Structure probing data (2A3) for a 207-nucleotide construct.
The 2A3 profile rests on 381 reads.
Source: RMDB library OK3TST, as collected in RNAgym.
Reactivities are given for positions 27 through 156.
RNA sequence: GGGAACGACUCGAGUAGAGUCGAAAAGCCGGACCUUUCUGGUCCGAUGGGCGGGUCACUUCACCUGUAUAACGCCUCUACUGAAAUACUUUUCUGUGAAUUGCACAGAUUAAUCUGUGCUACUACGCUGAGAUACAAGUGAUUGCAAAUAGAUGUCACCGUCUUGACGUUUCGACGUCAAGACGGUAAAAGAAACAACAACAACAAC
Reactivity to 2A3 in 0.01 (KOAc 150mM, MgCl2 10mM, bicine 150mM(pH8.5), 24C), signal-to-noise 1, nucleotides 027 to 156: g070c050c000g000g000a050c060c010u210u220u010c180u280g000g000u000c000c000g020a050u000g000g000g020c110g000g030g000u000c060a020c040u100u050c070a120c050c010u030g020u000a040u010a180a170c010g060c000c040u000c020u050a040c020u020g020a040a020a000u180a070c060u000u140u020u000c000u050g070u010g090a080a040u150u010g000c000a000c020a000g010a000u140u210a170a110u030c000u020g000u000g000c000u000a000c000u050a060c020g010c000u070g000a110g020a260u050a190c040a080a020g080u070g030a030u000u160g060c090a150a000a000u020a170g120a110u020g050u140c070